[RMDB]
RNA sequence: GGGAACGACUCGAGUAGAGUCGAAAAGGCAGGACUUACCAAGUCUGGGGGCCGAUGAGGGUUGGCUCAAAGUAGGGUUUUGACUUGAAAACUCAAGCUGUAACCCCAAAACGAUGGAGGUAAAUGAAAAAUCCAUCUGCCUUCGGGCAGAUGGAAACAAUAUCUGCUUCUUCGGAAGCAGAUAUUGAAAAGAAACAACAACAACAAC
Reactivity to 2A3 in 0.01 (KOAc 150mM, MgCl2 10mM, bicine 150mM(pH8.5), 24C), signal-to-noise 2, nucleotides 027 to 156: g050g070c070a010g030g000a000c030u090u090a120c070c050a050a040g050u040c070u070g010g030g000g060g000c010c070g030a060u140g040a060g030g020g020u080u090g020g020c010u050c050a110a060a030g060u110a090g020g010g020u010u020u040u050g050a100c000u040u060g030a090a100a120a040c090u000c000a000a000g020c020u040g090u150a020a040c000c000c000c000a000a060a000a080c070g070a040u090g070g010a070g060g000u120a090a120a090u140g110a080a080a040a020a010u000c000c000a000u000c000u000g000c000c000u020u030c200g000g000g000c000a000g000a000u000g000g000a000a000a000
Reactivity to DMS in 0.01 (KOAc 150mM, MgCl2 10mM, bicine 150mM(pH8.5), 24C), signal-to-noise 1, nucleotides 027 to 156: g020g030c060a100g000g000a060c020u000u000a120c050c010a030a110g000u010c020u000g000g040g010g040g020c080c020g000a120u020g020a100g000g050g110u000u000g000g000c060u000c070a020a040a090g040u000a150g010g010g020u020u000u000u000g000a050c000u000u000g010a040a110a100a120c270u000c020a040a010g000c010u040g010u010a060a120c000c010c000c010a010a090a020a120c040g010a100u000g010g000a070g010g000u000a100a100a130u010g000a020a040a060a100a150u010c010c000a000u010c000u000g000c010c000u000u000c300g040g010g000c000a010g010a010u000g010g000a010a000a050